Structure probing data (2A3 and DMS) for a 177-nucleotide construct.
It was measured as part of the RMDB library OK1LIB.
The reactions ran in a buffer of 150 mM KOAc, 10 mM MgCl2 and 150 mM bicine (pH 8.5), at 24 C.
As a SHAPE reagent, 2A3 marks flexible, mostly unpaired nucleotides at the ribose 2'-OH.
The DMS profile rests on 26,944 reads.
RNA sequence: GGGAACGACUCGAGUAGAGUCGAAAACAGGUUUAUGCAACUUGCUUUGGACAAAGUCAAGGCUACCCUUGAUGAUGAUUGGGAGACAUUUGGGGUCAAAAUAGGUUCUAAAGGAGACUCUAUUAGCGAUAAUGACAUACUUCGGUAUGUCAUUAUCAAAAGAAACAACAACAACAAC
Reactivity to 2A3 in 0.01 (KOAc 150mM, MgCl2 10mM, bicine 150mM(pH8.5), 24C), signal-to-noise 9, nucleotides 027 to 126: c020a020g030g090u050u080u070a090u190g050c050a080a090c050u040u040g020c010u080u060u080g070g020a040c060a060a090a010g020u080c010a020a020g040g050c130u140a120c020c000c000u020u040g010a030u020g020a020u060g010a040u060u120g060g030g010a070g020a020c050a060u040u050u120g020g000g000g010u070c040a060a040a030a100u100a070g040g010u070u030c030u130a090a120a040g110g030a070g040a040c030u010c020u100a100u080u100a060g090c060
Reactivity to DMS in 0.01 (KOAc 150mM, MgCl2 10mM, bicine 150mM(pH8.5), 24C), signal-to-noise 9, nucleotides 027 to 126: c040a060g010g000u000u010u020a040u040g010c100a040a080c020u000u020g000c040u000u000u010g010g010a090c150a050a050a160g000u020c010a020a020g000g020c200u020a130c140c010c000u000u000g020a020u010g000a130u010g010a070u010u000g000g000g010a060g010a060c080a070u000u010u010g010g000g000g000u000c100a060a040a070a080u020a040g000g000u010u000c060u020a050a080a080g000g000a150g010a030c040u010c020u000a050u000u010a070g010c190